[RMDB]
RNA sequence: GGGAACGACUCGAGUAGAGUCGAAAACAAAGGUGAUUAGAGACCCCUGUAGUUCCGGCCGUAAACUAUGCCAACUGGGUGUUACGUAGUGGUACCCACGAGAAAUCAAGUAUAUGGGCUAUGGGGAUAGCUCUACUAAGUUCGCUUAGUAGAGCUAAAAAGAAACAACAACAACAAC
Reactivity to DMS in 0.01 (KOAc 150mM, MgCl2 10mM, bicine 150mM(pH8.5), 24C), signal-to-noise 7, nucleotides 027 to 126: c050a080a080a100g020g020u000g010a130u010u020a070g000a170g010a080c080c000c010c010u000g000u000a050g000u010u030c040c050g000g000c080c110g030u010a040a080a030c030u010a060u010g000c210c020a040a300c300u000g000g000g020u000g020u000u000a010c020g020u030a080g020u010g000g010u000a030c000c000c000a020c060g000a250g000a040a070a090u010c060a050a040g000u000a070u010a090u030g010g010g000c010u000a010u000g010g010g010g020a160
Reactivity to 2A3 in 0.01 (KOAc 150mM, MgCl2 10mM, bicine 150mM(pH8.5), 24C), signal-to-noise 8, nucleotides 027 to 126: c040a000a110a020g110g020u090g060a170u060u170a070g040a010g030a130c010c000c000c000u000g010u020a010g010u110u300c020c030g020g020c030c020g130u100a050a120a030c070u060a080u240g030c020c020a040a020c040u010g000g020g010u020g030u030u020a070c160g120u180a050g030u060g030g020u040a010c000c010c000a010c050g050a050g050a070a070a050u110c030a050a020g060u030a060u020a070u280g020g010g000c000u000a000u010g010g000g000g000a010